[RMDB]
RNA sequence: GGGAACGACUCGAGUAGAGUCGAAAACAUAAUGUUCAAUCCUAAUUAGUUGUACUGGUGUGGAUAACGUACGGAAACCAUCCAGACAACCACCAUUAUCCAUCCGAAACGUACGGGACGCCUACAGAGCACAUCAUGAACAUAGAAUUGCUUACGCCCCGAAUACCACAUUCGUGUGGUAUUCGGGAAAAGAAACAACAACAACAAC
Reactivity to 2A3 in 0.01 (KOAc 150mM, MgCl2 10mM, bicine 150mM(pH8.5), 24C), signal-to-noise 1, nucleotides 027 to 156: c030a020u130a080a030u180g070u120u110c070a050a050u150c030c020u180a200a080u120u110a030g020u000u010g060u010a280c000u070g010g010u120g000u020g110g090a090u090a290a000c060g070u200a080c100g150g000a060a060a060c000c000a000u000c000c000a000g010a000c000a000a000c000c000a010c060c000a140u040u040a010u000c000c030a030u040c020c000g040a080a110a040c030g040u100a000c000g020g000g070a000c030g100c010c010u090a110c010a080g000a010g030c010a020c000a030u120c030a040u170g000a020a030c000a020u100a280g110a130a090u080u010g000c000u090u050a000c030g090c010